[RMDB]
RNA sequence: GGGAACGACUCGAGUAGAGUCGAAAAGAAAGAAAGAAAGAACUGGUGACCUAACACCCGCCCAUCACCACCGGACAGAUUCUGAACUUGUCCUGUGGUGUUUGGUGUGGUUUUGGGGUACGCAGAACGCUCGGAUUGGCUUCGGCCAAUCCGAGCGAAAAGAAACAACAACAACAAC
Reactivity to 2A3 in 0.01 (KOAc 150mM, MgCl2 10mM, bicine 150mM(pH8.5), 24C), signal-to-noise 1, nucleotides 027 to 126: g110a040a180a000g060a080a070a000g040a060a150a040g000a190a000c050u000g010g020u030g100a060c000c000u000a020a000c000a000c020c270c000g000c030c000c000a030u000c000a000c000c000a050c030c050g060g000a000c000a000g000a020u220u000c090u300g060a120a090c030u240u070g000u000c000c000u000g000u000g000g030u000g000u000u000u000g000g000u000g080u300g000g000u020u000u000u010g000g000g000g040u030a000c140g020c030a000g000a040a000
Structure probing data (2A3) for a 177-nucleotide construct. For 2A3, 396 sequencing reads were counted.